[RMDB]
Annotation
Structure probing data (2A3 and DMS) for a 177-nucleotide construct. DMS adducts were read by reverse transcription with MarathonRT. The DMS profile rests on 1,134 reads. Reactivities are given for positions 27 through 126. The data come from the RNA Mapping Database (RMDB), library OK1LIB.
RNA sequence: GGGAACGACUCGAGUAGAGUCGAAAAACGUGAUCACCGCGGUCGACGGCGCUCCGAUCAACUCGGCCACCGCGAUGGCGGACGCGCUUAACGGGCAUCAUCCCGGUGACGUCAUCUCGGUGACCUGCGUACUUUGUGCGUUCGCGCACAAAGUACGAAAAGAAACAACAACAACAAC
Reactivity to 2A3 in 0.01 (KOAc 150mM, MgCl2 10mM, bicine 150mM(pH8.5), 24C), signal-to-noise 3, nucleotides 027 to 126: a000c030g030u070g040a030u040c010a020c060c020g000c010g040g070u130c070g030a100c060g000g030c020g020c050u010c030c000g040a100u060c060a020a090c040u000c040g010g020c020c000a010c000c000g000c010g000a010u020g000g000c020g000g060a170c020g010c000g020c010u140u120a120a030c010g000g020g000c040a190u090c010a110u140c110c000c000g010g030u030g000a020c000g000u010c000a000u000c000u000c010g020g010u010g000a010c000c020u020g020
Reactivity to DMS in 0.01 (KOAc 150mM, MgCl2 10mM, bicine 150mM(pH8.5), 24C), signal-to-noise 1, nucleotides 027 to 126: a170c040g000u060g000a080u000c190a030c060c100g020c020g000g000u000c030g000a120c040g000g080c040g000c060u050c060c030g050a030u000c200a120a080c200u020c040g000g000c260c000a040c020c000g000c100g010a020u000g040g030c000g000g010a000c000g050c020g000c110u040u130a140a270c060g000g050g000c080a200u040c220a180u000c000c000c000g010g000u000g000a130c000g000u000c000a000u000c000u000c020g020g010u000g000a000c000c000u000g000